An RNA of 177 nucleotides, treated with 2A3 and DMS and read out base by base. Source: RMDB library OK1LIB, as collected in RNAgym. For DMS, 803 sequencing reads were counted.
RNA sequence: GGGAACGACUCGAGUAGAGUCGAAAAGAAAGAAAAGAACCUGGGCGAGGACAGAAAACUGGAACGGACCAAAGCCAAAAAGGAAAGGACGAAAAUCCUAAGUCCUACCAGGUAAAAGAAAAGAAAAGAUACGACUGAGUUUCGACUCAGUCGUAUCAAAAGAAACAACAACAACAAC
Reactivity to 2A3 in 0.01 (KOAc 150mM, MgCl2 10mM, bicine 150mM(pH8.5), 24C), signal-to-noise 1, nucleotides 027 to 126: g020a030a070a000g050a010a210a000a000g120a050a000c000c000u000g000g010g000c180g220a020g000g010a000c000a020g140a010a130a000a000c020u090g000g000a070a030c090g080g070a130c000c000a000a000a060g080c000c000a010a070a300a050a000g010g000a010a010a010g000g020a000c010g000a010a110a160a070u000c010c010u180a090a020g000u000c000c010u000a010c000c000a000g000g050u000a000a050a000a000g060a020a070a000a010g150a000a030a000a100
Reactivity to DMS in 0.01 (KOAc 150mM, MgCl2 10mM, bicine 150mM(pH8.5), 24C), signal-to-noise 1, nucleotides 027 to 126: g050a240a140a190g000a150a000a150a220g000a080a050c000c040u000g000g020g110c030g030a000g000g000a000c030a090g000a000a110a100a080c100u020g000g000a030a150c060g000g000a100c000c100a110a090a120g000c040c000a000a160a170a110a150g040g020a170a040a110g000g000a080c020g000a120a070a260a300u000c000c000u000a010a240g020u000c000c000u000a080c000c000a020g000g000u000a040a060a000a170g040a100a050a200a290g000a080a080a020a100